[RMDB]
This 177-nucleotide RNA was probed chemically with 2A3 and DMS.
The DMS profile rests on 3,378 reads.
It was measured as part of the RMDB library OK1LIB.
For DMS the reverse transcriptase was MarathonRT.
RNA sequence: GGGAACGACUCGAGUAGAGUCGAAAAUUACAUAAGUCUAACACCUUGUUUCGGACUAACAAGGCCGAAUGGAGGAUGGCCGGGCCUCCAUAGUUAGACGUCCGAGAACCAGCCGAAAUGAAAAAGAGACUCGAUUAUUAUUCGUAAUAAUCGAGUCAAAAGAAACAACAACAACAAC
Reactivity to 2A3 in 0.01 (KOAc 150mM, MgCl2 10mM, bicine 150mM(pH8.5), 24C), signal-to-noise 5, nucleotides 027 to 126: u180u120a080c050a060u200a180a020g020u000c010u000a000a000c010a010c010c000u000u010g060u050u070u090c150g120g100a090c070u020a030a010c020a000a010g010g060c040c090g180a120a020u010g000g000a000g000g010a020u040g010g000c040c010g000g000g030c000c000u000c000c000a010u010a010g010u000u000a000g000a000c000g000u000c040c020g090a050g030a110a050c000c000a010g030c010c010g030a070a050a080u170g050a090a040a050a010a000g170a010
Reactivity to DMS in 0.01 (KOAc 150mM, MgCl2 10mM, bicine 150mM(pH8.5), 24C), signal-to-noise 3, nucleotides 027 to 126: u020u050a080c160a150u010a070a130g020u000c000u000a000a030c010a300c000c010u000u030g000u000u000u010c130g000g000a090c100u000a040a010c020a000a040g000g000c170c210g010a050a080u000g000g000a000g020g000a080u000g000g000c010c000g000g000g000c020c000u030c040c010a000u020a020g010u000u020a040g010a000c010g000u000c070c050g030a130g010a110a110c020c030a150g000c020c000g000a080a140a050u060g000a080a120a090a050a160g050a300